[RMDB]
RNA sequence: GGGAACGACUCGAGUAGAGUCGAAAAGAUAUGGACUACCCACCUCACUAGCUCGAUGAAACUAGUCGGAAACGACUAGUGGAGAGCUUCUGAGAGGUCCUAAGUCAAACCCUGCUUCGGCAGGGAACAGAUUAUGCCUGUUCGCAGGCAUAAUCUGAAAAGAAACAACAACAACAAC
Reactivity to 2A3 in 0.01 (KOAc 150mM, MgCl2 10mM, bicine 150mM(pH8.5), 24C), signal-to-noise 2, nucleotides 027 to 126: g050a040u130a080u170g000g000a040c010u180a260c070c000c000a030c010c000u020c000a000c020u010a010g000c010u000c040g300a300u040g010a000a010a010c010u000a000g020u020c000g000g030a060a000a130c000g000a000c030u000a010g030u010g000g010a000g010a000g000c000u010u000c010u010g000a020g010a030g050g000u000c000c010u070a250a060g060u070c080a120a020a300c000c000c000u000g000c020u080u080c300g190g000c000a000g000g000g020a000a010
Reactivity to DMS in 0.01 (KOAc 150mM, MgCl2 10mM, bicine 150mM(pH8.5), 24C), signal-to-noise 2, nucleotides 027 to 126: g010a070u000a260u000g000g000a040c030u020a130c010c000c070a300c120c000u000c000a020c050u000a000g040c010u000c000g050a090u040g020a240a140a000c000u000a010g000u000c000g010g000a090a090a140c000g000a000c010u010a000g020u010g000g010a010g000a000g030c000u010u000c070u000g000a000g000a130g070g010u000c000c010u000a020a120g000u000c040a150a080a170c000c000c000u000g000c000u000u000c210g010g000c010a010g000g010g010a010a050

Description: The data come from the RNA Mapping Database (RMDB), library TTRDEL. An RNA of 177 nucleotides, treated with 2A3 and DMS and read out base by base. 2A3 is a SHAPE reagent: it acylates the 2'-hydroxyl of flexible nucleotides of all four kinds. The reactions ran in a buffer of 150 mM KOAc, 10 mM MgCl2 and 150 mM bicine (pH 8.5), at 24 C. The DMS profile rests on 1,009 reads.